RNA sequence: GGGAACGACUCGAGUAGAGUCGAAAAAAGUAAAACCAUCCUGUAGGUUGUCUUUUCGUUUUCUUGAUAUGUCUUUUAUAGCACAAACAUUUUAAACUUUGAAGUCAUAUUUACCAUUGGUUCACACUGUAACCAGCAGCAUUGCAGGUUACAAUGAAAUGACUUUUACGUUCGCGUAAAAGUCAUUAAAAGAAACAACAACAACAAC
Reactivity to 2A3 in 0.01 (KOAc 150mM, MgCl2 10mM, bicine 150mM(pH8.5), 24C), signal-to-noise 2, nucleotides 027 to 156: a020a000g130u130a090a040a020a030c010c000a030u050c010c000u030g020u110a050g000g040u050u020g020u070c030u080u150u040u060c060g070u100u070u000u010c070u050u060g000a020u020a020u070g010u000c000u010u020u030u170a130u110a090g060c100a030c060a140a170a080c060a130u220u280u150u220a030a190a040c070u090u040u010g010a010a000g010u020c000a020u040a030u090u050u080a050c020c030a030u050u220g020g000u050u040c010a010c020a000c090u050g000u020a000a000c020c000a020g020c000a000g000c090a120u000u300g010c000a010g000g000u000u000a000c010a000a060u080g020a030
Reactivity to DMS in 0.01 (KOAc 150mM, MgCl2 10mM, bicine 150mM(pH8.5), 24C), signal-to-noise 2, nucleotides 027 to 156: a050a060g010u010a060a040a060a060c040c000a090u000c110c040u010g000u000a130g020g030u000u000g010u000c010u000u000u000u010c070g020u000u000u000u000c010u000u000g000a070u010a030u010g000u000c010u000u000u000u020a080u000a060g070c000a190c100a130a090a160c070a150u000u010u010u020a050a120a060c020u000u000u000g010a040a040g000u010c020a070u000a060u000u010u000a070c040c040a300u000u020g030g000u000u000c050a300c010a020c030u000g010u000a010a010c000c000a080g050c000a070g000c210a180u000u010g040c020a080g020g000u000u000a010c010a000a030u000g000a090